[RMDB]
RNA sequence: GGGAACGACUCGAGUAGAGUCGAAAAGGAAAGAUGGAAACAUCAAAGACACAAGAGCAAAGUGUCAAGCUGAAAGACGUGGAACUGGCUAAUAAAAUUGGCCGGAUCAUACCACGAUGAAAAAAAACAUUAGUUAUACGUUCGCGUAUAACUAAUGAAAAGAAACAACAACAACAAC
Reactivity to 2A3 in 0.01 (KOAc 150mM, MgCl2 10mM, bicine 150mM(pH8.5), 24C), signal-to-noise 6, nucleotides 027 to 126: g100g020a120a050a070g010a010u030g000g030a040a040a000c010a010u020c020a050a080a010g010a000c010a000c010a050a070g070a050g300c070a090a080a050g000u000g010u010c020a020a010g030c040u080g050a120a110a040g110a030c010g000u010g000g010a030a040c010u010g000g000c010u020a020a020u080a090a210a030a090u040u020g010g000c020c000g010g010a050u070c020a030u060a100c010c000a000c040g020a050u150g040a080a070a020a000a000a000a000a010
Reactivity to DMS in 0.01 (KOAc 150mM, MgCl2 10mM, bicine 150mM(pH8.5), 24C), signal-to-noise 5, nucleotides 027 to 126: g020g000a080a100a100g000a020u000g020g010a130a090a190c010a020u000c010a050a090a190g010a020c010a010c010a080a120g010a170g020c220a140a080a120g000u000g000u000c000a120a120g000c100u000g000a080a120a070g010a090c020g040u010g000g000a100a080c020u000g010g010c000u000a010a050u000a040a060a040a300u000u000g000g000c000c010g000g000a090u000c060a090u010a130c020c010a020c010g000a090u000g000a000a010a000a040a100a080a040a110
Structure probing data (2A3 and DMS) for a 177-nucleotide construct. For DMS, 6,194 sequencing reads were counted. The RNA was probed in 150 mM KOAc, 10 mM MgCl2 and 150 mM bicine (pH 8.5) at 24 C.